[RMDB]
RNA sequence: GGGAACGACUCGAGUAGAGUCGAAAAUUGCGAUUCGUAGGUUACGUCUACGUUAAAACGUUAAACAGUUUAAAUUAACUGCAAACGAAAACUCAUACGCUGUAGCUGCUUAGUUCAGCCCAGCUGCCAAUAGACUGCCUGCCCGUGGCGGUCUUGCGAAAAUCAUAUACUUCGGUAUAUGAUUUUCAAAAGAAACAACAACAACAAC
Reactivity to DMS in 0.01 (KOAc 150mM, MgCl2 10mM, bicine 150mM(pH8.5), 24C), signal-to-noise 3, nucleotides 027 to 156: u010u000g000c030g020a190u000u000c030g010u000a040g030g030u000u010a090c120g000u000c000u000a040c040g000u000u000a030a070a090a100c020g010u010u000a050a190a080c000a000g020u000u010u000a050a140a210u000u000a020a040c000u000g030c020a300a100a060c030g010a130a080a070a120c110u010c070a190u010a060c090g020c010u000g010u000a020g010c000u000g010c040u000u000a090g010u000u000c030a060g000c040c030c020a020g000c000u000g030c060c050a070a090u000a040g000a020c010u000g020c020c010u010g020c010c050c040g040u000g010g010c010g020g010u000c010u000u000g000c300
Reactivity to 2A3 in 0.01 (KOAc 150mM, MgCl2 10mM, bicine 150mM(pH8.5), 24C), signal-to-noise 6, nucleotides 027 to 156: u150u130g050c060g070a060u040u100c010g000u000a010g020g040u110u070a050c020g000u010c010u000a010c010g020u010u010a040a120a010a010c020g000u020u000a060a180a030c030a040g020u040u040u110a220a300a250u110u160a040a000c000u020g040c070a110a040a020c040g100a040a030a060a070c070u100c130a080u110a170c060g000c000u020g030u050a050g000c010u000g010c010u160u180a050g020u210u100c020a000g000c000c050c000a010g010c010u040g010c030c010a060a030u020a040g000a000c000u000g000c010c000u030g010c000c020c000g030u080g000g000c010g000g020u000c000u000u010g000c000
The record gives the reactivity of an RNA of 207 nucleotides to DMS and 2A3. The DMS profile rests on 6,077 reads. The data come from the RNA Mapping Database (RMDB), library ARCHII. 2A3 adducts were read by reverse transcription with SuperScript II with manganese. Conditions: 150 mM KOAc, 10 mM MgCl2 and 150 mM bicine (pH 8.5), 24 C. For 2A3, 4,686 sequencing reads were counted.